[RMDB]
RNA sequence: GGGAACGACUCGAGUAGAGUCGAAAAGCCAGUCAGAGGGCGCUACCAUGCAAACUAGGGCUGGCUACUCUUGCACAGAAUCACCUUUCUAUAAUAACCAGUGCAAGAAGGGUUAUUAUACCACUUAAAAAUCGUGAAUGCUUCGGCAUUCACGAAACUAGACUGUAGCCUUCGGGCUACAGUCUAGAAAAGAAACAACAACAACAAC
Reactivity to 2A3 in 0.01 (KOAc 150mM, MgCl2 10mM, bicine 150mM(pH8.5), 24C), signal-to-noise 1, nucleotides 027 to 156: g010c000c000a000g000u010c020a000g000a020g030g000g000c020g000c000u150a300c080c110a110u270g000c000a000a030a000c000u000a020g030g030g000c000u000g000g000c010u000a000c000u010c000u000u000g000c010a010c000a020g120a080a100u140c040a180c080c010u090u270u150c130u090a020u020a010a000u000a020a000c000c000a010g030u020g000c000a000a000g000a010a010g010g000g010u010u000a000u010u010a000u010a010c000c100a160c070u140u110a030a080a050a110a110u020c000g000u000g000a000a000u000g000c000u020u060c180g080g010c020a000u000u020c000a000c010g000a000a000a000
An RNA of 207 nucleotides, treated with 2A3 and read out base by base. The reactions ran in a buffer of 150 mM KOAc, 10 mM MgCl2 and 150 mM bicine (pH 8.5), at 24 C. The 2A3 profile rests on 587 reads.